[RMDB]
Chemical mapping of a 207-nucleotide RNA with DMS and 2A3. As a SHAPE reagent, 2A3 marks flexible, mostly unpaired nucleotides at the ribose 2'-OH. The RNA was probed in 150 mM KOAc, 10 mM MgCl2 and 150 mM bicine (pH 8.5) at 24 C. DMS adducts were read by reverse transcription with MarathonRT.
RNA sequence: GGGAACGACUCGAGUAGAGUCGAAAACCUCACUACAUUUUACUGUUCCUAAAGAAUUUGUGACAGGUACAGUAAAACGUAUUGCAAGGUUUAUCUGUUCCUAUAAACAGGUAAAUAACAAUAUAUGAAAAGCAAAGACUGUUCGCAGUCUUUGCAACUACCCUAAAGAGUUCGCUCUUUAGGGUAGAAAAGAAACAACAACAACAAC
Reactivity to DMS in 0.01 (KOAc 150mM, MgCl2 10mM, bicine 150mM(pH8.5), 24C), signal-to-noise 1, nucleotides 027 to 156: c040c000u010c060a140c100u000a040c020a040u000u000u000u000a010c020u030g020u000u000c000c020u000a200a190a130g010a160a180u000u000u000g020u010g020a270c250a020g000g000u000a020c020a060g000u010a000a010a030a020c050g030u000a030u000u000g000c040a100a140g050g040u010u000u010a000u000c000u000g060u000u010c040c130u010a180u020a060a020a030c000a020g020g020u000a000a040a030u000a110a210c010a080a110u010a100u030a060u010g000a060a160a130a200g000c000a040a020a020g000a050c010u010g040u010u000c300g030c030a010g000u000c000u020u020u020g000c000a000a040
Reactivity to 2A3 in 0.01 (KOAc 150mM, MgCl2 10mM, bicine 150mM(pH8.5), 24C), signal-to-noise 6, nucleotides 027 to 156: c000c000u040c010a040c040u100a040c010a050u010u010u000u000a000c000u000g000u040u060c030c000u080a110a140a060g110a220a290u230u240u260g160u120g080a050c080a070g000g000u010a000c000a000g000u010a000a000a000a000c010g010u000a010u010u040g010c080a110a050g030g000u000u010u000a000u010c010u000g010u020u050c040c060u120a140u250a110a020a000c000a000g010g020u020a000a060a050u130a070a040c020a050a030u110a010u070a050u250g050a120a090a040a010g000c000a000a000a000g000a000c000u010g020u080u090c200g000c090a000g000u000c000u000u000u000g000c000a000a000